[RMDB]
RNA sequence: GGGAACGACUCGAGUAGAGUCGAAAAUCAAACGAUUUCGAUCGUUUGAAACGGACCACUCCUGCGGGAGUUAAGGCCAUACGGUCAGCCGGGUCCACUGCCAGUCAUUCGGUUUCGACCGAAUGAACUAUUCAUUAGGAUUCGUCCUAAUGAAUAGAAAAGAAACAACAACAACAAC
Reactivity to DMS in 0.01 (KOAc 150mM, MgCl2 10mM, bicine 150mM(pH8.5), 24C), signal-to-noise 9, nucleotides 027 to 126: u000c000a000a010a010c000g010a010u000u000u010c180g020a020u000c000g010u000u000u000g010a010a100a110c170g010g000a020c010c020a090c010u000c000c000u000g030c170g030g000g010a020g010u000u010a070a080g010g010c000c030a110u010a080c150g010g010u000c060a200g000c030c030g010g010g000u000c000c010a110c140u010g000c030c030a110g000u000c000a010u000u000c000g000g000u000u000u010c190g010a020c000c000g010a010a000u000g000a020a140
Reactivity to 2A3 in 0.01 (KOAc 150mM, MgCl2 10mM, bicine 150mM(pH8.5), 24C), signal-to-noise 9, nucleotides 027 to 126: u020c000a000a010a000c000g010a010u030u090u190c220g110a020u010c000g000u010u000u010g000a030a000a000c060g010g000a000c010c000a010c010u010c000c000u060g020c300g090g010g000a000g000u030u150a110a070g010g000c010c000a080u110a160c110g050g030u050c030a010g030c030c000g050g000g000u000c010c010a010c040u080g020c020c000a030g090u020c000a000u000u010c000g000g040u030u050u110c200g090a020c000c000g010a000a000u000g000a010a010